[RMDB]
RNA sequence: GGGAACGACUCGAGUAGAGUCGAAAAGAUAUGGACCAGCCGAUAAGUCGCACUCGGAAACGAGUGUCGACUUUUGACGGCUGUCCUAAGUCAAAGGGGAUAAGUCAGUUCGCUGACUUAUCCCCAAUCACACCUUUAAGUUCGCUUAAAGGUGUGAAAAAGAAACAACAACAACAAC
Reactivity to DMS in 0.01 (KOAc 150mM, MgCl2 10mM, bicine 150mM(pH8.5), 24C), signal-to-noise 6, nucleotides 027 to 126: g010a050u000a300u000g000g010a020c250c130a010g020c000c000g020a150u010a020a020g010u000c000g000c000a010c000u000c000g010g000a100a080a170c000g000a010g010u000g010u000c010g010a010c000u000u000u000u000g020a180c100g000g000c010u000g000u000c000c000u000a030a140g010u000c030a060a100a120g020g010g000g010a020u000a000a000g000u000c000a010g010u000u010c260g010c000u000g000a020c000u010u000a000u000c000c000c000c000a000a010
The data come from the RNA Mapping Database (RMDB), library TTRDEL. This 177-nucleotide RNA was probed chemically with DMS. DMS adducts were read by reverse transcription with MarathonRT. Values are in units of 0.01, from 0 to 300, in steps of 10. The RNA was probed in 150 mM KOAc, 10 mM MgCl2 and 150 mM bicine (pH 8.5) at 24 C. Values cover nucleotides 27 to 126. For DMS, 9,133 sequencing reads were counted.